The record gives the reactivity of an RNA of 207 nucleotides to DMS and 2A3.
Source: RMDB library OK3TST, as collected in RNAgym.
The 2A3 profile rests on 2,158 reads.
The RNA was probed in 150 mM KOAc, 10 mM MgCl2 and 150 mM bicine (pH 8.5) at 24 C.
High 2A3 reactivity points to a flexible backbone, as in loops and unpaired stretches.

[RMDB]
RNA sequence: GGGAACGACUCGAGUAGAGUCGAAAACGGAAGUGGUGAGGGUGCGCGUUUCUGACUUCGUGGCUGCUCUCUGGAGACUGCUCAGUAUCUUUGCACAUGCCACCCUGAGAUGCAUGACCAUUGAUAGCCUGGUUUGCCUGUAAGACAAAGCAGCCCCCCAAAUGAAGGGUUUCGACCCUUCAUUUGGAAAAGAAACAACAACAACAAC
Reactivity to DMS in 0.01 (KOAc 150mM, MgCl2 10mM, bicine 150mM(pH8.5), 24C), signal-to-noise 1, nucleotides 027 to 156: c080g020g030a110a100g030u000g020g020u000g010a070g030g000g070u000g010c000g040c090g020u000u000u010c000u010g020a050c080u000u000c040g050u000g010g030c020u000g040c020u000c040u000c050u000g000g010a110g020a050c030u000g000c020u000c070a130g020u010a060u000c060u010u000u000g050c080a160c070a040u000g000c030c000a050c000c010c050u000g010a110g000a070u000g010c050a070u000g020a150c080c000a050u000u010g010a150u010a060g000c050c010u000g010g030u000u000u000g020c010c000u020g030u000a070a160g000a080c010a030a040a060g010c030a030g030c000c000c020c050
Reactivity to 2A3 in 0.01 (KOAc 150mM, MgCl2 10mM, bicine 150mM(pH8.5), 24C), signal-to-noise 3, nucleotides 027 to 156: c050g020g020a070a030g030u040g050g050u090g060a060g020g010g030u060g030c100g000c050g050u000u060u000c080u040g080a120c060u050u040c130g060u110g020g000c010u020g000c000u020c000u000c030u050g060g000a030g020a040c060u050g020c060u060c140a020g040u060a060u020c020u050u060u090g070c070a040c000a110u050g020c020c010a080c080c000c030u100g050a140g000a070u090g020c020a020u030g030a100c030c000a030u010u050g030a020u060a020g020c000c010u000g010g010u060u090u150g020c000c000u060g030u070a070a000g010a020c040a040a100a000g030c020a020g010c000c000c030c000